[RMDB]
Overview:
This 177-nucleotide RNA was probed chemically with DMS and 2A3. For 2A3 the reverse transcriptase was SuperScript II with manganese. Conditions: 150 mM KOAc, 10 mM MgCl2 and 150 mM bicine (pH 8.5), 24 C.
RNA sequence: GGGAACGACUCGAGUAGAGUCGAAAAGGCGACCCCAGGGAAAGUGCCACAGAGAGCAAACCGCCAUGCCUUGCAUGGUAAGGGUGAAAGGGUGGGGUAAGAGCCCACCGCGCCGCUGGUGACAGUGCAGAUAAGUGAACUUCGGUUCACUUAUCUGAAAAGAAACAACAACAACAAC
Reactivity to DMS in 0.01 (KOAc 150mM, MgCl2 10mM, bicine 150mM(pH8.5), 24C), signal-to-noise 2, nucleotides 027 to 126: g000g000c090g000a210c040c000c010c070a140g010g020g010a110a050a090g000u010g010c000c010a090c080a060g030a100g000a120g010c030a030a060a060c030c030g020c000c000a010u000g020c000c190u010u000g020c010a020u000g010g010u000a020a060g010g000g000u010g010a080a080a100g010g020g020u000g000g020g000g020u000a080a080g020a270g000c010c000c010a010c030c000g000c040g010c030c020g000c050u000g000g010u020g000a070c040a040g020u000g010
Reactivity to 2A3 in 0.01 (KOAc 150mM, MgCl2 10mM, bicine 150mM(pH8.5), 24C), signal-to-noise 2, nucleotides 027 to 126: g030g000c020g030a050c010c020c020c050a070g060g020g010a070a160a060g080u070g050c020c000a070c060a060g160a000g030a010g100c020a110a080a030c000c010g030c000c010a000u000g000c010c100u150u260g040c000a010u010g020g000u070a080a140g100g010g010u040g000a040a020a030g050g010g000u010g010g000g050g010u050a060a010g000a030g100c010c000c000a000c010c010g000c000g000c000c000g020c020u040g000g050u030g020a040c020a030g050u050g080